[RMDB]
Background:
The data come from the RNA Mapping Database (RMDB), library OK1LIB. This 177-nucleotide RNA was probed chemically with 2A3 and DMS. In probing experiments dimethyl sulfate is read out at A N1 and C N3, which are open when not base-paired. 2A3 adducts were read by reverse transcription with SuperScript II with manganese.
RNA sequence: GGGAACGACUCGAGUAGAGUCGAAAAGAAAGAUAGUGGAAAAGUGUGUGCAUUGAAUGAAGAAGAUUCAAUAGGACUUUCUUCCACACACACUAUCUUCUCUCAUAGCAUGCUAGUCGAGAGAAAAGGGAUAUGAUAAGUUCGCUUAUCAUAUCCCAAAAGAAACAACAACAACAAC
Reactivity to 2A3 in 0.01 (KOAc 150mM, MgCl2 10mM, bicine 150mM(pH8.5), 24C), signal-to-noise 9, nucleotides 027 to 126: g080a020a050a000g010a000u030a000g020u050g080g180a060a050a070a110g040u040g000u000g010u010g080c120a150u150u230g150a150a100u150g020a020a030g010a030a010g070a090u090u040c060a120a190u130a300g090g010a020c010u100u140u010c000u040u000c000c010a000c000a000c000a000c000a000c000u000a000u000c000u030u010c000u000c000u000c000a010u040a010g030c100a070u220g030c030u030a030g090u180c090g030a010g000a000g000a030a060a030a040
Reactivity to DMS in 0.01 (KOAc 150mM, MgCl2 10mM, bicine 150mM(pH8.5), 24C), signal-to-noise 5, nucleotides 027 to 126: g010a100a070a040g000a010u010a000g000u000g010g000a020a050a030a150g010u010g020u000g000u000g020c210a180u090u030g020a100a120u050g020a020a020g000a030a010g000a060u010u010c020a090a170u040a140g000g000a030c040u000u000u020c000u000u000c000c010a010c000a000c000a040c000a010c010u000a000u000c000u000u000c010u000c000u010c000a070u010a020g000c060a090u030g010c010u010a030g000u000c110g010a010g000a030g000a050a050a120a080